[RMDB]
RNA sequence: GGGAACGACUCGAGUAGAGUCGAAAACACACACUCUGACUGACACUCAGUCUCAGUCACACUCAGAGACUGUGUCAGAGUCAGACUCUCUCAGUGUGAGAGUGACUCUCUGAGAGUGAGUGUCAGACCCGUAAGUUCGAUUCGUCGAACUUACGGGAAAAGAAACAACAACAACAAC
Reactivity to DMS in 0.01 (KOAc 150mM, MgCl2 10mM, bicine 150mM(pH8.5), 24C), signal-to-noise 2, nucleotides 027 to 126: c080a120c190a100c150a100c070u000c060u020g020a180c000u030g020a030c040a040c010u000c040a000g000u020c010u000c000a030g010u000c050a020c070a090c020u000c100a130g050a130g000a060c100u010g020u000g010u000c170a020g000a070g010u000c030a040g020a300c100u000c010u000c010u020c130a110g000u010g080u000g000a080g000a100g060u000g000a070c010u000c050u010c020u000g030a040g010a010g000u000g020a020g000u000g000u000c040a030g020a070
Reactivity to 2A3 in 0.01 (KOAc 150mM, MgCl2 10mM, bicine 150mM(pH8.5), 24C), signal-to-noise 3, nucleotides 027 to 126: c100a000c000a000c000a020c040u080c020u080g100a090c000u010g010a000c040a010c010u020c000a020g300u010c020u010c000a020g050u030c040a010c000a000c040u090c020a030g070a050g050a300c040u070g000u020g030u090c050a010g000a010g010u010c010a020g090a150c000u020c000u000c000u010c070a110g060u040g040u050g200a020g000a010g040u050g040a060c020u010c000u010c020u050g010a000g000a010g110u010g010a000g000u000g040u020c000a000g030a080